[RMDB]
RNA sequence: GGGAACGACUCGAGUAGAGUCGAAAACUCAAGCCAAACAAUUAUGCACAAAACCUUAAACUGGCCAUAAACCACCGUUAGCGAUGAGGUUUCCGCGCAUGACGCGCCGCCAGCUUGACCAUAAAAACGGCUGAGCUCCGUUCGCGGAGCUCAGCCGAAAAGAAACAACAACAACAAC
Reactivity to 2A3 in 0.01 (KOAc 150mM, MgCl2 10mM, bicine 150mM(pH8.5), 24C), signal-to-noise 1, nucleotides 027 to 126: c000u000c000a000a000g160c100c030a090a090a000c000a000a140u050u030a140u070g020c030a060c000a170a090a040a000c000c020u170u210a270a000a000c080u100g090g030c000c000a030u050a210a120a020c000c000a000c000c010g140u100u010a010g060c090g080a030u150g000a070g150g000u000u140u000c000c100g000c000g000c030a000u090g150a280c030g000c140g000c150c000g090c000c000a000g000c000u030u030g060a000c000c000a060u230a300a080a110a000a000